[RMDB]
RNA sequence: GGGAACGACUCGAGUAGAGUCGAAAAUCUCUCGAGACCGACCCGAAAGUAACUUAAGACGCGGAAGGGAGAGUCAAAAAGAGAAAGAGACCUAAAGGGUGAAAGCGAAUCGGGGAAGAUAAGCUAGCCUAUGCUUAGUCUUCGGACUAAGCAUAGGAAAAGAAACAACAACAACAAC
Reactivity to DMS in 0.01 (KOAc 150mM, MgCl2 10mM, bicine 150mM(pH8.5), 24C), signal-to-noise 5, nucleotides 027 to 126: u000c010u010c000u000c020g020a300g000a040c050c020g000a300c020c020c000g020a110a180a120g000u040a060a210c140u030u040a120a080g000a060c300g020c020g000g020a300a130g000g010g000a040g000a090g010u040c060a020a080a090a100a030g010a070g000a030a080a050g000a110g030a060c030c000u000a030a060a100g000g000g010u000g000a030a070a080g010c030g000a070a040u010c060g000g000g020g000a080a080g000a040u020a010a150g000c020u020a100g000
Reactivity to 2A3 in 0.01 (KOAc 150mM, MgCl2 10mM, bicine 150mM(pH8.5), 24C), signal-to-noise 5, nucleotides 027 to 126: u000c000u000c000u000c010g020a010g010a020c020c010g030a030c000c010c000g000a030a030a000g030u090a040a020c070u160u150a140a040g100a050c110g020c020g050g020a040a030g020g010g000a030g010a010g010u000c000a010a090a040a050a000g040a000g040a020a070a000g060a020g030a020c000c020u090a120a050a050g100g020g000u060g080a110a030a010g040c050g020a030a030u050c040g010g000g030g090a020a090g020a080u080a050a020g030c040u030a020g020
Notes: This 177-nucleotide RNA was probed chemically with DMS and 2A3. The reactions ran in a buffer of 150 mM KOAc, 10 mM MgCl2 and 150 mM bicine (pH 8.5), at 24 C.